[RMDB]
RNA sequence: GGGAACGACUCGAGUAGAGUCGAAAAACACGGUGAUUACGAUCACCGUGAGUUUUCCACGGGCAAUGUAUCUAGCGCAACACGUUAACCCGAGCUGUUGCAUAGGUACAUUGGUCAGUGGGAGCAAGCUUAUUGUCAGUUUCGACUGACAAUAAGCAAAAGAAACAACAACAACAAC
Reactivity to DMS in 0.01 (KOAc 150mM, MgCl2 10mM, bicine 150mM(pH8.5), 24C), signal-to-noise 4, nucleotides 027 to 126: a130c000a000c000g010g030u010g000a010u010u020a080c220g020a090u000c000a000c020c000g010u000g000a020g000u000u010u000u000c000c010a020c000g000g000g000c000a000a030u000g010u000a000u000c000u000a010g000c240g000c000a020a000c000a010c150g010u000u010a110a160c100c080c050g000a090g000c060u000g000u000u010g000c000a080u000a000g000g000u000a000c000a010u000u000g000g000u000c000a050g050u010g000g010g000a010g010c100a120a110
Reactivity to 2A3 in 0.01 (KOAc 150mM, MgCl2 10mM, bicine 150mM(pH8.5), 24C), signal-to-noise 9, nucleotides 027 to 126: a010c000a000c000g000g010u000g010a010u030u100a070c300g070a030u010c000a000c000c000g000u000g000a010g000u100u080u020u000c000c000a000c020g020g020g040c000a010a000u000g000u000a000u000c000u000a000g030c010g000c180a010a000c010a010c070g070u130u140a130a110c040c040c050g040a050g030c070u020g000u000u000g000c010a010u000a000g000g000u000a010c000a000u000u000g000g060u010c040a050g000u000g000g000g000a010g030c060a140a040

Chemical mapping of a 177-nucleotide RNA with DMS and 2A3.
DMS adducts were read by reverse transcription with MarathonRT.
The data come from the RNA Mapping Database (RMDB), libraries RFM100 and RFMREP.